[RMDB]
RNA sequence: GGGAACGACUCGAGUAGAGUCGAAAAAGACUAGCUACCAUGUGACUAGUCGCAUCUAGACUAGAGGUACGUACGGUACACGAUCUGAUCGUACGAUCGGUACUACAUGAUCAUGGUAUAGCUAGGAAUCCGUAAAAUAGUUCGCUAUUUUACGGAUAAAAGAAACAACAACAACAAC
Reactivity to 2A3 in 0.01 (KOAc 150mM, MgCl2 10mM, bicine 150mM(pH8.5), 24C), signal-to-noise 9, nucleotides 027 to 126: a000g100a050c010u000a000g000c000u010a010c000c000a000u010g010u010g070a050c000u000a000g010u010c000g000c020a220u140c120u160a030g010a020c000u000a010g010a050g150g070u090a050c090g010u020a020c080g030g030u050a040c260a070c060g030a020u000c090u200g060a160u150c080g070u150a040c070g030a030u020c020g050g010u010a010c010u010a010c010a050u150g010a030u040c000a000u010g010g000u040a040u080a130g000c000u000a000g000g000a030
Reactivity to DMS in 0.01 (KOAc 150mM, MgCl2 10mM, bicine 150mM(pH8.5), 24C), signal-to-noise 9, nucleotides 027 to 126: a080g010a160c000u000a010g000c010u000a020c010c010a020u000g010u000g010a280c010u000a010g000u000c000g010c300a100u010c220u010a090g000a020c010u000a010g000a230g010g010u000a030c180g010u000a060c090g010g000u000a040c060a110c030g010a010u000c100u010g010a080u000c150g000u000a090c170g000a020u000c020g020g010u010a010c010u000a060c060a140u010g000a100u000c000a010u000g000g000u000a060u010a040g010c000u000a010g010g000a120
The record gives the reactivity of an RNA of 177 nucleotides to 2A3 and DMS. 2A3 adducts were read by reverse transcription with SuperScript II with manganese. It was measured as part of the RMDB library OK2TRN.